The data come from the RNA Mapping Database (RMDB), library TTRDEL. Chemical mapping of a 177-nucleotide RNA with DMS and 2A3. For DMS, 17,343 sequencing reads were counted. Conditions: 150 mM KOAc, 10 mM MgCl2 and 150 mM bicine (pH 8.5), 24 C.
RNA sequence: GGGAACGACUCGAGUAGAGUCGAAAAGAUAUGGAAACACACGGGAGAGAAUUCGGAAACGAACUCUCGAGGAUCGUGGUUUCCUAAGUCAAACAGUUCUGAAUUGCUUCGGCAAUUCAGAACUGAACAAAUGAAAUGAGUUCGCUCAUUUCAUUUGAAAAGAAACAACAACAACAAC
Reactivity to DMS in 0.01 (KOAc 150mM, MgCl2 10mM, bicine 150mM(pH8.5), 24C), signal-to-noise 8, nucleotides 027 to 126: g000a050u010a300u000g000g000a000a000a010c010a090c000a000c010g000g000g010a100g010a020g010a020a030u000u000c000g010g000a080a100a170c010g000a010a010c040u000c000u000c000g000a100g010g010a040u010c000g000u000g000g000u000u000u000c000c000u000a020a080g010u000c020a130a110a220c010a000g000u000u000c000u000g000a010a000u000u000g000c000u000u020c210g030g000c000a010a000u000u000c000a000g000a000a000c000u000g010a060a130
Reactivity to 2A3 in 0.01 (KOAc 150mM, MgCl2 10mM, bicine 150mM(pH8.5), 24C), signal-to-noise 5, nucleotides 027 to 126: g030a020u090a030u160g000g050a050a020a000c240a030c000a000c300g000g040g000a010g000a000g000a030a050u030u000c010g000g020a070a080a040c010g000a000a010c010u010c000u010c010g010a110g010g020a020u040c000g000u010g010g000u000u000u000c000c000u010a100a030g040u010c040a080a050a090c000a030g000u010u000c000u000g010a000a010u000u000g000c000u050u060c220g140g010c010a000a000u000u010c000a000g000a010a000c000u000g000a010a000